Structure probing data (DMS) for a 207-nucleotide construct. For DMS the reverse transcriptase was MarathonRT. The RNA was probed in 150 mM KOAc, 10 mM MgCl2 and 150 mM bicine (pH 8.5) at 24 C. Reactivities are given for positions 27 through 156.
RNA sequence: GGGAACGACUCGAGUAGAGUCGAAAAGAUGAUUUGCCCCCACCAUACACCCCAACUGCUCCUGUGGCGGCUGAGCCUGUGCCUGUUAUUACUGCGCCCGCAGCAGCUGUGCCAGUGCCAAGUCUAACUGGCAGGCGCCGCGGUUGGCAGGGAACCCCAAUAUACCCUGAUUCGUCAGGGUAUAUUGAAAAGAAACAACAACAACAAC
Reactivity to DMS in 0.01 (KOAc 150mM, MgCl2 10mM, bicine 150mM(pH8.5), 24C), signal-to-noise 1, nucleotides 027 to 156: g010a160u020g000a090u000u000u000g030c020c010c000c020c020a080c050c070a120u010a090c030a140c010c030c010c010a060a090c020u000g000c030u000c070c040u010g010u000g010g040c000g040g010c020u000g000a120g010c030c020u000g000u000g010c030c020u010g010u000u000a110u010u010a110c000u000g050c000g000c230c000c020g070c010a070g010c010a070g020c000u010g000u010g010c000c000a010g000u000g020c090c060a070a150g030u010c100u010a100a100c010u010g010g030c000a300g000g000c000g000c010c010g000c010g000g030u000u000g020g030c040a030g010g010g020a050a110c020c030c070